[RMDB]
Structure probing data (DMS and 2A3) for a 177-nucleotide construct. For 2A3, 2,475 sequencing reads were counted. The RNA was probed in 150 mM KOAc, 10 mM MgCl2 and 150 mM bicine (pH 8.5) at 24 C. For DMS the reverse transcriptase was MarathonRT. It was measured as part of the RMDB library M2PK50.
RNA sequence: GGGAACGACUCGAGUAGAGUCGAAAACUCUGAGUCUUCGGACUCAGAGAAACGCUUUCGACACUGAUACCAACAAACGCGAGUUUGUUGGUAUAAUCGCAAAAAGGUGGGAGUUCGCUCCCACCAAGACUAUUAUGACGUUCGCGUCAUAAUAGUCAAAAGAAACAACAACAACAAC
Reactivity to DMS in 0.01 (KOAc 150mM, MgCl2 10mM, bicine 150mM(pH8.5), 24C), signal-to-noise 6, nucleotides 027 to 126: c000u010c000u000g000a020g000u000c000u000u010c190g030g010a020c000u000c000a000g000a000g000a030a060a080c300g010c160u000u000u000c010g020a080c080a110c080u000g010a050u000a000c000c000a000a000c010a000a000a000c000g010c300g000a150g010u000u000u000g000u000u000g000g010u000a000u000a010a050u000c060g010c230a060a080a080a070a070g010g010u000g000g010g000a010g010u000u020c210g000c000u000c000c000c000a000c000c000a010a020
Reactivity to 2A3 in 0.01 (KOAc 150mM, MgCl2 10mM, bicine 150mM(pH8.5), 24C), signal-to-noise 1, nucleotides 027 to 126: c000u000c000u010g020a000g010u010c000u000u080c230g100g010a000c000u010c000a000g000a000g000a010a000a000c060g020c030u040u110u070c040g040a030c010a030c080u090g040a010u010a020c010c000a010a010c000a030a010a000c010g050c030g020a030g050u000u000u010g000u000u000g000g000u000a000u000a000a000u000c000g010c080a000a060a100a100a300g010g000u000g000g030g000a030g000u100u240c260g060c040u010c000c000c000a000c000c000a000a000